The record gives the reactivity of an RNA of 177 nucleotides to DMS and 2A3. The reactions ran in a buffer of 150 mM KOAc, 10 mM MgCl2 and 150 mM bicine (pH 8.5), at 24 C. For DMS the reverse transcriptase was MarathonRT. Source: RMDB libraries RFM100 and RFMREP, as collected in RNAgym.

RNA sequence: GGGAACGACUCGAGUAGAGUCGAAAAUCGGCACCGGAUUCCUCAGCCCCCAGCCCCCCGGGGUCGUCAGGAUCGGGUCUAGUUCUUCGCAGCAGAAUCCCCAUCCUUCGGGCCAGCGAGAGCUGGCAUCCUAUGUCAGGUUCGCCUGACAUAGGAUAAAAGAAACAACAACAACAAC
Reactivity to DMS in 0.01 (KOAc 150mM, MgCl2 10mM, bicine 150mM(pH8.5), 24C), signal-to-noise 6, nucleotides 027 to 126: u020c050g010g000c040a050c020c010g000g010a110u000u020c020c010u000c120a170g010c030c020c020c020c050a130g000c020c000c010c020c020c130g010g010g000g030u010c040g010u010c120a050g010g010a040u010c160g010g010g010u000c040u010a090g010u000u000c020u010u010c080g020c080a050g000c060a090g010a090a100u000c020c010c000c030a070u010c030c030u000u010c060g010g020g000c000c000a000g000c000g010a180g000a190g010c000u000g010g010c020
Reactivity to 2A3 in 0.01 (KOAc 150mM, MgCl2 10mM, bicine 150mM(pH8.5), 24C), signal-to-noise 8, nucleotides 027 to 126: u080c020g010g000c040a040c050c010g020g020a100u080u060c000c010u040c020a020g020c000c000c000c000c000a020g020c010c000c000c000c010c010g000g000g010g020u040c030g080u060c040a030g020g020a030u030c030g020g000g010u020c050u070a060g030u040u030c010u040u070c050g040c060a050g000c010a010g030a090a080u080c010c000c000c010a020u050c020c000u070u070c040g030g030g000c000c000a000g000c000g020a090g000a010g060c000u000g000g000c000